[RMDB]
RNA sequence: GGGAACGACUCGAGUAGAGUCGAAAAGAAAGAAAGAAAAACUCGUCGUCACGAGUACGAAAAGCGUGGAAGUACAAGUGACGGUAGGAAACUACCGACGAGGAACCACGCUGAAAAGAAAAGAAAAGGGUAAGUGAUAGUUCGCUAUCACUUACCCAAAAGAAACAACAACAACAAC
Reactivity to 2A3 in 0.01 (KOAc 150mM, MgCl2 10mM, bicine 150mM(pH8.5), 24C), signal-to-noise 1, nucleotides 027 to 126: g070a020a100a000g200a030a040a060g090a070a130a000a000a000c000u000c000g010u000c060g080u000c050a010c000g010a000g000u010a010c010g000a000a070a010a000g010c010g000u010g100g040a070a020g020u030a000c000a000a000g000u030g200a090c000g000g000u030a000g000g080a020a000a000c000u000a000c010c030g000a000c010g020a020g050g030a010a000c000c000a000c000g000c040u040g070a020a050a000a010g050a010a010a000a030g120a060a080a030a000
Reactivity to DMS in 0.01 (KOAc 150mM, MgCl2 10mM, bicine 150mM(pH8.5), 24C), signal-to-noise 2, nucleotides 027 to 126: g010a080a090a140g000a130a090a120g010a070a010a100a030a100c000u000c000g050u010c300g000u030c070a030c000g020a160g000u000a010c060g020a080a140a160a000g000c000g000u010g020g020a080a050g000u020a020c000a010a230g000u000g010a080c000g000g020u000a010g000g000a070a090a180c000u000a030c050c000g000a180c000g000a170g000g000a080a040c000c020a010c060g050c010u000g000a030a010a030a170g000a070a010a100a060g000a120a080a110a050
Conditions: 150 mM KOAc, 10 mM MgCl2 and 150 mM bicine (pH 8.5), 24 C. Structure probing data (2A3 and DMS) for a 177-nucleotide construct. For DMS the reverse transcriptase was MarathonRT. For 2A3 the reverse transcriptase was SuperScript II with manganese. The 2A3 profile rests on 1,687 reads. For DMS, 2,515 sequencing reads were counted.